[RMDB]
Record summary:
An RNA of 207 nucleotides, treated with 2A3 and DMS and read out base by base. The data come from the RNA Mapping Database (RMDB), library RSTRND. For 2A3, 4,330 sequencing reads were counted. The DMS profile rests on 3,616 reads. The reactions ran in a buffer of 150 mM KOAc, 10 mM MgCl2 and 150 mM bicine (pH 8.5), at 24 C.
RNA sequence: GGGAACGACUCGAGUAGAGUCGAAAAAGCAGGCCGUGGUCGCACCCAACCACGUUAAAUAGGGUGCAAAAACACAACUGCCAACGAAUACGCCUACGCUUUGGCAGCCUAAGCGUGCUGCCACGCACCUUUAGACCUUGCCUGUGGGUCUAAAGGUUCAAUGAUUACGGUUCGCCGUAAUCAUUGAAAAAGAAACAACAACAACAAC
Reactivity to 2A3 in 0.01 (KOAc 150mM, MgCl2 10mM, bicine 150mM(pH8.5), 24C), signal-to-noise 4, nucleotides 027 to 156: a000g010c000a000g000g000c010c000g000u000g000g000u020c020g040c000a000c010c000c000a020a030c000c000a000c030g040u070u050a020a000a000u010a010g000g000g010u010g020c010a060a040a000a060a030c110a010c020a060a090c070u150g050c070c060a090a020c080g110a090a040u130a100c050g090c010c010u040a060c070g020c040u140u110u060g000g000c000a000g000c020c010u170a190a070g110c080g080u130g000c030u010g000c010c000a010c010g020c000a020c010c000u010u000u000a000g000a000c000c000u010u020g000c000c000u000g000u010g010g000g000u000c000u000a000a000a000g000g000u000
Reactivity to DMS in 0.01 (KOAc 150mM, MgCl2 10mM, bicine 150mM(pH8.5), 24C), signal-to-noise 2, nucleotides 027 to 156: a030g020c000a030g000g030c030c030g030u000g010g000u000c050g070c020a030c000c000c010a180a150c000c010a010c000g000u010u000a000a010a070u000a050g010g020g010u010g020c010a030a020a050a090a050c090a110c090a110a070c050u000g010c030c040a050a070c070g020a140a090u010a060c060g010c030c030u000a040c020g020c080u000u010u000g030g050c010a020g050c030c010u010a100a110g050c170g040u000g000c000u000g020c020c010a040c090g030c030a130c000c010u000u000u000a010g000a000c000c000u010u000g010c000c010u000g010u000g000g040g000u000c010u010a000a010a000g000g010u000